[RMDB]
RNA sequence: GGGAACGACUCGAGUAGAGUCGAAAAGAUAUGGAAUCCGGAGAGCAACAGCAUAGGAAGUCGGAAACGACUUCUAUGACAUGCUCCACGGAUUCCUAAGUCAAAACCCGCCUGUUCGCAGGCGGGAGUUGAAGUAAUACUUCGGUAUUACUUCAACAAAAGAAACAACAACAACAAC
Reactivity to 2A3 in 0.01 (KOAc 150mM, MgCl2 10mM, bicine 150mM(pH8.5), 24C), signal-to-noise 6, nucleotides 027 to 126: g000a010u040a030u090g000g000a000a000u000c010c020g010g020a110g010a000g050c080a050a200c110a220g080c000a030u020a020g200g250a060a040g020u000c000g020g010a030a020a040c000g010a000c000u010u010c000u010a000u000g020a030c030a150u300g000c000u000c000c000a030c000g000g000a000u000u000c000c000u000a000a000g000u000c000a040a040a090a220c010c000c000g000c010c000u050g050u090u130c300g000c190a000g000g000c020g000g000g010a020
Reactivity to DMS in 0.01 (KOAc 150mM, MgCl2 10mM, bicine 150mM(pH8.5), 24C), signal-to-noise 7, nucleotides 027 to 126: g010a030u000a280u010g000g000a020a000u000c000c000g010g010a300g010a020g010c000a070a070c290a160g010c000a010u000a040g020g010a010a030g020u000c000g010g000a050a050a130c000g000a010c000u000u000c000u000a000u000g010a030c080a300u000g010c000u000c000c270a220c010g000g000a010u000u000c000c000u000a010a060g000u010c020a130a060a140a140c020c000c000g010c000c000u000g020u000u010c220g030c000a010g000g010c010g000g000g000a000
Chemical mapping of a 177-nucleotide RNA with 2A3 and DMS. For DMS the reverse transcriptase was MarathonRT. Values cover nucleotides 27 to 126. It was measured as part of the RMDB library TTRDES. For 2A3, 25,306 sequencing reads were counted. Conditions: 150 mM KOAc, 10 mM MgCl2 and 150 mM bicine (pH 8.5), 24 C.